Chemical mapping of a 207-nucleotide RNA with DMS and 2A3. The DMS profile rests on 1,844 reads. Reactivities are given for positions 27 through 156. Source: RMDB library VIROID, as collected in RNAgym. For 2A3, 539 sequencing reads were counted. DMS adducts were read by reverse transcription with MarathonRT.

[RMDB]
RNA sequence: GGGAACGACUCGAGUAGAGUCGAAAAAAGCAUGGCUACAUAAAGCUAGAGAAGUGGGUCGAAGUGGGGCGUACAACAAGGACGGUCCAAGGGCGAGUCGACCUCCCUCGGCACGAGGACGUGCCUGGUUUUGAGUGGGGGAGGAUGUUAUGGACAAUCCUACACCCUACUUCGGUAGGGUGUAGGAAAAAGAAACAACAACAACAAC
Reactivity to DMS in 0.01 (KOAc 150mM, MgCl2 10mM, bicine 150mM(pH8.5), 24C), signal-to-noise 1, nucleotides 027 to 156: a060a060g040c060a130u010g020g010c060u010a240c150a140u000a060a060a080g070c020u010a110g050a090g000a130a060g020u000g010g020g070u000c070g010a090a100g060u000g000g000g000g000c090g000u000a050c070a020a120c130a050a050g020g020a040c050g040g040u000c000c030a120a020g000g000g000c080g030a090g040u000c020g000a220c030c010u020c000c000c030u000c080g000g000c010a040c050g010a210g040g000a200c020g030u010g040c060c000u000g030g050u000u000u000u000g000a130g050u000g030g000g000g050g030a090g010g000a060u000g000u000u000a060u000g040g010a140c130a130a240
Reactivity to 2A3 in 0.01 (KOAc 150mM, MgCl2 10mM, bicine 150mM(pH8.5), 24C), signal-to-noise 1, nucleotides 027 to 156: a000a010g050c070a030u120g000g000c050u080a110c020a120u220a020a110a000g000c000u110a000g060a000g040a100a030g030u080g040g000g010u060c010g000a000a000g000u020g060g050g000g000c040g070u010a060c020a150a000c060a050a000g000g020a000c060g040g060u000c000c000a040a020g030g030g000c020g000a010g000u050c020g020a060c000c040u000c000c000c040u080c080g000g060c000a000c000g010a080g300g000a050c020g000u000g000c000c000u000g060g100u000u030u070u120g170a150g020u210g000g000g000g000g020a020g000g000a000u120g000u080u100a080u020g040g000a020c000a040a030